The record gives the reactivity of an RNA of 207 nucleotides to 2A3.
2A3 adducts were read by reverse transcription with SuperScript II with manganese.
It was measured as part of the RMDB library RSTRND.
The RNA was probed in 150 mM KOAc, 10 mM MgCl2 and 150 mM bicine (pH 8.5) at 24 C.
For 2A3, 4,484 sequencing reads were counted.
RNA sequence: GGGAACGACUCGAGUAGAGUCGAAAAUACGCAUUAGCUGCCUAAAAAACAGCCUGCGUGAUCUUCACAAGAUUGUUUGCGUUUUGCUAGAAGGUCUUAUUUAUCAGCAAACUACGUUUGGCUACUGUCUAGUUAGUUAAAAAGAGAUUUAUAGACUCCAUAUUACGAGGUUCGCCUCGUAAUAUGGAAAAGAAACAACAACAACAAC
Reactivity to 2A3 in 0.01 (KOAc 150mM, MgCl2 10mM, bicine 150mM(pH8.5), 24C), signal-to-noise 5, nucleotides 027 to 156: u110a000c000g000c000a010u150u160a030g000c010u000g010c000c000u050a070a050a000a000a010a010c010a000g000c000c000u010g000c000g010u020g000a010u000c000u000u000c000a010c000a020a020g010a030u050u160g070u020u010u020g000c010g000u010u020u020u010g030c030u050a100g010a000a000g030g010u010c040u060u120a230u110u170u100a260u210c050a010g000c010a000a010a010c010u010a010c010g000u010u010u010g010g000c000u000a010c020u090g020u010c010u000a010g010u020u020a000g000u000u020a020a010a000a010a000g040a010g010a050u070u250u170a090u050a010g010a010c000u000